An RNA of 177 nucleotides, treated with 2A3 and DMS and read out base by base. Source: RMDB library OK2TRN, as collected in RNAgym. Conditions: 150 mM KOAc, 10 mM MgCl2 and 150 mM bicine (pH 8.5), 24 C. For 2A3 the reverse transcriptase was SuperScript II with manganese. Reactivities are given for positions 27 through 126.
[RMDB]
RNA sequence: GGGAACGACUCGAGUAGAGUCGAAAAACGCUCAUGUGUGACAUGAACCCAGUGCGUACUGUCCUACAGUACGCAAACGGCUUCUGUAGGACAGAGGCCAGGGUUAAUCUGUUUCACAGAUUAGCGAGGACAGCAGACUAUUCGUAGUUUGCUGUCCAAAAGAAACAACAACAACAAC
Reactivity to 2A3 in 0.01 (KOAc 150mM, MgCl2 10mM, bicine 150mM(pH8.5), 24C), signal-to-noise 9, nucleotides 027 to 126: a000c010g000c000u010c020a020u040g020u000g020u030g160a010c010a040u110g020a050a050c000c000c010a030g080u050g070c000g010u030a040c000u010g040u150c040c030u090a050c000a000g000u010a010c020g000c000a020a010a010c050g040g000c000u000u000c010u010g070u070a120g100g210a030c000a000g010a010g010g000c000c010a010g010g000g000u000u010a020a040u010c020u020g050u050u160u040c030a010c000a010g080a060u020u020a000g000c000g010a040
Reactivity to DMS in 0.01 (KOAc 150mM, MgCl2 10mM, bicine 150mM(pH8.5), 24C), signal-to-noise 9, nucleotides 027 to 126: a120c030g010c010u000c130a050u000g010u000g020u010g010a050c020a020u010g010a020a030c000c000c000a240g010u010g010c020g020u000a030c000u000g010u000c140c080u010a100c010a010g010u000a010c080g010c000a010a040a070c250g010g010c010u000u000c010u000g000u000a100g010g030a300c010a010g000a040g000g010c000c010a120g010g000g010u000u000a040a020u000c030u000g010u000u010u000c130a030c000a010g000a070u000u000a020g010c000g000a170